[RMDB]
RNA sequence: GGGAACGACUCGAGUAGAGUCGAAAAGAAAGAAAGAAAGGCCAAAGAUGAAAUAUGUGGAUGCUAUUUCUGUAUGACGUCUCACGUCUGAUUACAAAACCCAUUACUGCCUUCCUUCUGAGGCCAACUUAAUUCCGGCUUUCGAGCCGGAAUUAAGAAAAGAAACAACAACAACAAC
Reactivity to 2A3 in 0.01 (KOAc 150mM, MgCl2 10mM, bicine 150mM(pH8.5), 24C), signal-to-noise 4, nucleotides 027 to 126: g040a000a040a000g090a020a090a000g090a070a040a000g020g000c020c000a000a020a020g050a080u090g040a030a100a000u160a080u180g060u090g070g000a050u070g040c030u100a120u140u120u030c120u030g020u020a050u070g000a010c010g010u000c060u060c210a030c030g030u000c010u040g070a060u050u100a030c030a020a050a030a040c010c020c000a000u070u130a050c070u050g020c020c000u030u020c010c010u030u040c000u020g040a050g040g040c000c000a000a010
Reactivity to DMS in 0.01 (KOAc 150mM, MgCl2 10mM, bicine 150mM(pH8.5), 24C), signal-to-noise 3, nucleotides 027 to 126: g010a050a140a070g020a040a040a030g020a000a080a140g000g000c000c110a020a160a020g000a040u000g000a080a170a060u020a060u000g010u000g000g010a110u000g020c130u000a110u000u010u000c020u000g040u000a010u010g020a170c150g010u030c100u040c180a050c180g010u000c000u000g000a120u000u000a070c080a060a030a050a030c180c120c020a080u010u030a040c080u000g000c040c070u000u010c040c030u000u000c010u040g000a300g030g000c000c100a090a170

This 177-nucleotide RNA was probed chemically with 2A3 and DMS. Reactivities are rounded to 0.1 and cut off at 0 and 3. 2A3 adducts were read by reverse transcription with SuperScript II with manganese. The RNA was probed in 150 mM KOAc, 10 mM MgCl2 and 150 mM bicine (pH 8.5) at 24 C. The data come from the RNA Mapping Database (RMDB), library RFM100.